[RMDB]
The record gives the reactivity of an RNA of 177 nucleotides to DMS and 2A3. The 2A3 profile rests on 7,796 reads. Conditions: 150 mM KOAc, 10 mM MgCl2 and 150 mM bicine (pH 8.5), 24 C.
RNA sequence: GGGAACGACUCGAGUAGAGUCGAAAAACACGAUCCAAUUGAACGCCCAGGGCGGACCGCGAGGAGGUUCGAAUGUCCGAUGCCGCCCCGAAGAAAGAAAGACACAGACAUCUACGGGGUAAGCAUCCCAUUACUACUAGUUCGCUAGUAGUAAUGGAAAAGAAACAACAACAACAAC
Reactivity to DMS in 0.01 (KOAc 150mM, MgCl2 10mM, bicine 150mM(pH8.5), 24C), signal-to-noise 4, nucleotides 027 to 126: a070c120a100c090g000a050u010c010c060a100a120u020u010g010a060a110c090g010c040c020c020a090g000g020g020c050g010g010a020c060c030g000c110g000a100g010g000a110g010g020u010u010c030g010a090a060u000g000u000c060c030g000a020u000g010c000c060g000c010c000c000c020g030a090a020g000a030a070a110g010a120a080a120g020a100c160a090c120a080g000a110c190a080u000c010u000a090c010g010g000g000g020u010a040a110g020c000a020u000c040
Reactivity to 2A3 in 0.01 (KOAc 150mM, MgCl2 10mM, bicine 150mM(pH8.5), 24C), signal-to-noise 3, nucleotides 027 to 126: a000c060a010c050g050a050u060c030c000a080a130u050u140g040a120a030c050g030c000c010c030a050g030g070g020c040g020g030a030c030c000g020c050g060a100g070g080a050g000g040u030u040c010g030a080a100u150g040u050c030c030g000a000u010g000c010c000g000c000c000c020c000g020a000a010g030a050a230a010g090a050a090a010g110a030c080a010c010a200g120a040c010a050u010c000u020a030c020g000g000g000g010u010a010a040g000c000a000u000c000